[RMDB]
RNA sequence: GGGAACGACUCGAGUAGAGUCGAAAAAAGAGUUUCUCUGUUCUCUAAAAUAAAAACAGAGUGGUGGAGUCAUUAUGACCCUCUUAGAGUUUCCAGUUUCUCUAACAAACUGGUGGCGAGCCUGCUCAAAAUCAUUAGACCUUCGGGUCUAAUGAAAGUCAUAUAGAUGCUUCGGCAUCUAUAUGACAAAAGAAACAACAACAACAAC
Reactivity to 2A3 in 0.01 (KOAc 150mM, MgCl2 10mM, bicine 150mM(pH8.5), 24C), signal-to-noise 2, nucleotides 027 to 156: a000a010g000a000g010u010u000u010c000u000c010u000g010u010u000c000u000c000u000a120a280a220a090u100a060a030a040a050a000c000a010g000a000g030u020g000g000u000g050g050a190g030u000c000a000u060u300a060u210g020a030c000c050c000u030c020u040u160a040g000a000g120u020u050u020c020c000a000g010u010u010u020c040u010c020u090a060a140c030a090a010a000c000u000g060g000u010g060g060c070g030a090g010c040c060u080g020c000u010c100a150a180a080a070u020c000a000u010u000a000g020a010c010c000u050u020c250g090g000g000u000c000u010a000a000u010g000a000a020a000